[RMDB]
RNA sequence: GGGAACGACUCGAGUAGAGUCGAAAAUUGAUCGUACAUAGCACAUAUCAUGUCAAAUAACUCCAGUCAACAUGCAUAUCACCACCACUAGAUCACGAGCUUAAUUACCAUGCCGCGUGAAACCAGCAACCCGCUUGGCAGGGAUCCCUCUUCUCGCCUUCAGUCGAUUCUUCGGAAUCGACUGAAGAAAAGAAACAACAACAACAAC
Reactivity to 2A3 in 0.01 (KOAc 150mM, MgCl2 10mM, bicine 150mM(pH8.5), 24C), signal-to-noise 1, nucleotides 027 to 156: u040u060g030a050u120c090g010u070a060c020a050u040a010g040c030a020c010a050u110a010u080c080a090u130g080u070c010a050a020a190u170a160a070c040u010c010c090a020g030u060c060a020a000c020a130u040g090c000a020u110a010u080c090a040c040c030a000c010c000a030c030u080a020g030a100u000c000a000c050g040a010g000c010u090u150a050a080u120u010a100c050c010a040u030g040c030c000g060c030g020u030g030a020a060a090c030c010a030g020c000a040a030c020c000c000g040c010u050u130g030g000c020a070g050g000g000a020u000c000c000c030u070c090u090u000c040u030c050g130c020